[RMDB]
RNA sequence: GGGAACGACUCGAGUAGAGUCGAAAAUAGCACUGCCAACCCGGCAAAACAUUGUACGCCCAACCACGCAACAGCUUGUGGGACUGAAACUCUUCCACUGGUAAUUGGUCUCUCCAUAGUACGGGCAAGUAGGUGCAUACUUCGGUAUGCACCUACUAAAAGAAACAACAACAACAAC
Reactivity to 2A3 in 0.01 (KOAc 150mM, MgCl2 10mM, bicine 150mM(pH8.5), 24C), signal-to-noise 3, nucleotides 027 to 126: u080a000g080c020a020c170u060g020c000c010a040a070c060c010c020g000g000c010a000a000a000a040c060a080u140u160g060u130a080c030g010c010c000c000a000a050c010c020a040c040g020c040a080a050c030a110g050c010u130u100g040u040g010g000g060a000c020u100g090a100a040a020c050u060c030u140u030c000c000a040c050u040g080g000u060a080a100u020u100g040g030u000c020u000c000u000c020c010a040u030a060g060u070a070c010g000g000g050c050a030
Reactivity to DMS in 0.01 (KOAc 150mM, MgCl2 10mM, bicine 150mM(pH8.5), 24C), signal-to-noise 2, nucleotides 027 to 126: u020a060g000c090a090c060u000g020c020c020a120a080c080c040c070g020g000c040a050a090a080a100c240a080u030u000g030u000a100c060g020c030c000c010a130a130c060c050a040c050g000c100a060a120c210a110g020c040u010u000g020u000g000g000g000a030c130u030g010a030a030a090c090u000c060u000u000c020c000a040c020u000g000g000u010a010a110u000u010g000g020u000c000u040c020u020c030c060a050u020a030g000u000a080c130g000g000g000c070a070
Background: The record gives the reactivity of an RNA of 177 nucleotides to 2A3 and DMS. The 2A3 profile rests on 2,296 reads. For DMS, 2,496 sequencing reads were counted. It was measured as part of the RMDB library OK1LIB. The RNA was probed in 150 mM KOAc, 10 mM MgCl2 and 150 mM bicine (pH 8.5) at 24 C.